[RMDB]
RNA sequence: GGGAACGACUCGAGUAGAGUCGAAAACGGCCUGUGCGAUCUCCGUCAGGCGUGCGGCAAAAUCCGGCUCAUCUUCGUCAGGCGGAAAGACCGCGAUCUGGAACUGUCGCGCACGAAACAGGAGGUAAUAAUACUAUGCAUUCGUGCAUAGUAUUAUAAAAGAAACAACAACAACAAC
Reactivity to 2A3 in 0.01 (KOAc 150mM, MgCl2 10mM, bicine 150mM(pH8.5), 24C), signal-to-noise 8, nucleotides 027 to 126: c020g090g000c010c000u030g010u050g020c040g060a050u020c010u010c020c000g020u020c000a000g020g000c020g010u020g000c000g010g000c020a030a030a020a220u020c000c010g030g000c030u030c050a210u030c080u280u090c030g160u090c080a080g100g100c030g030g030a130a080a020g120a060c010c000g000c030g020a030u020c020u050g020g030a030a040c050u020g000u020c010g000c000g000c030a030c070g080a060a070a010c030a070g020g000a000g000g020u010a010
Reactivity to DMS in 0.01 (KOAc 150mM, MgCl2 10mM, bicine 150mM(pH8.5), 24C), signal-to-noise 9, nucleotides 027 to 126: c080g010g010c010c010u010g010u000g040c050g010a040u000c020u000c020c010g010u000c020a050g010g010c030g040u000g010c030g010g010c040a050a080a140a130u000c020c020g010g000c110u000c060a130u010c110u010u000c110g010u000c110a090g010g000c030g010g000a080a090a100g000a120c050c020g020c050g000a020u000c040u000g000g010a060a140c180u000g010u000c010g010c010g020c040a110c150g000a100a050a040c050a090g000g010a030g010g010u000a100